[RMDB]
RNA sequence: GGGAACGACUCGAGUAGAGUCGAAAAUACACUUUACGUGUGCUGGUUUCAUUACUUUGUCCCAAACCAGGCUCGCGUAAUUAAAGGCCAGUUUGGCCAGGUCCGCGUUAUCGAUGGUCACCAAUAAGUUUUAAAUUAACUUCGGUUAAUUUAAAACAAAAGAAACAACAACAACAAC
Reactivity to DMS in 0.01 (KOAc 150mM, MgCl2 10mM, bicine 150mM(pH8.5), 24C), signal-to-noise 3, nucleotides 027 to 126: u020a110c130a140c090u000u000u000a010c050g020u000g000u010g000c010u000g010g000u000u000u000c110a090u000u010a070c160u010u010u000g000u000c010c020c020a060a030a010c020c010a010g020g020c050u000c010g010c010g010u010a010a020u000u000a050a100a100g000g010c000c000a110g020u010u010u010g020g020c000c000a060g010g000u000c040c040g000c040g010u000u000a050u010c050g010a060u000g010g000u000c060a080c050c060a050a130u010a050a140
Reactivity to 2A3 in 0.01 (KOAc 150mM, MgCl2 10mM, bicine 150mM(pH8.5), 24C), signal-to-noise 3, nucleotides 027 to 126: u100a020c020a020c030u030u040u020a000c000g010u000g030u050g100c000u020g000g040u020u000u030c060a070u090u200a140c120u180u160u160g070u080c020c020c000a010a010a000c030c000a060g180g030c020u010c000g000c000g000u000a000a020u010u160a150a050a020g000g000c010c020a070g090u110u290u180g060g020c000c010a010g000g020u000c010c010g050c010g050u060u060a090u130c020g050a100u070g010g040u090c020a010c080c030a080a110u090a180a030

Structure probing data (DMS and 2A3) for a 177-nucleotide construct. The 2A3 profile rests on 2,913 reads. Reactivities are given for positions 27 through 126. The RNA was probed in 150 mM KOAc, 10 mM MgCl2 and 150 mM bicine (pH 8.5) at 24 C. For DMS, 3,878 sequencing reads were counted.